[RMDB]
RNA sequence: GGGAACGACUCGAGUAGAGUCGAAAAUACCGGCGCCACCUCUUCAAUUAUAUAGUGUCCGUAAUGGAUGGGGGCGUGGGUCUGUUUGACAGACAUAAACUCAUCGAUGAGUGCCCGGGAGGAGGCUCCAGCCUAUAAAUUUCGAUUUAUAGGCUGGAAAAGAAACAACAACAACAAC
Reactivity to DMS in 0.01 (KOAc 150mM, MgCl2 10mM, bicine 150mM(pH8.5), 24C), signal-to-noise 3, nucleotides 027 to 126: u060a160c010c030g010g040c140g050c000c000a090c000c000u020c030u020u000c080a120a100u040u020a130u010a140u010a090g030u000g020u000c010c020g010u060a120a130u050g000g000a000u000g000g000g060g010g020c060g010u010g010g010g020u000c020u000g000u010u050u030g030a040c060a030g010a010c000a050u020a090a170a020c020u000c000a080u040c180g000a140u000g000a060g010u010g000c000c010c010g000g000g010a020g020g010a080g020g010c050u000
Reactivity to 2A3 in 0.01 (KOAc 150mM, MgCl2 10mM, bicine 150mM(pH8.5), 24C), signal-to-noise 7, nucleotides 027 to 126: u100a030c000c020g010g010c040g010c010c010a120c020c000u020c010u080u050c050a110a140u260u070a090u080a090u060a180g140u090g040u080c020c020g070u140a080a130u200g020g000a010u030g050g000g000g000g000c000g020u080g020g030g030u010c010u020g110u040u220u270g110a050c030a000g020a000c010a000u150a030a100a010c010u000c010a060u130c150g240a210u140g020a010g020u020g030c010c000c000g000g010g000a010g010g010a010g020g000c000u010

The record gives the reactivity of an RNA of 177 nucleotides to DMS and 2A3. The data come from the RNA Mapping Database (RMDB), library OK1LIB. For 2A3 the reverse transcriptase was SuperScript II with manganese. As a SHAPE reagent, 2A3 marks flexible, mostly unpaired nucleotides at the ribose 2'-OH. The DMS profile rests on 3,871 reads. The reactions ran in a buffer of 150 mM KOAc, 10 mM MgCl2 and 150 mM bicine (pH 8.5), at 24 C.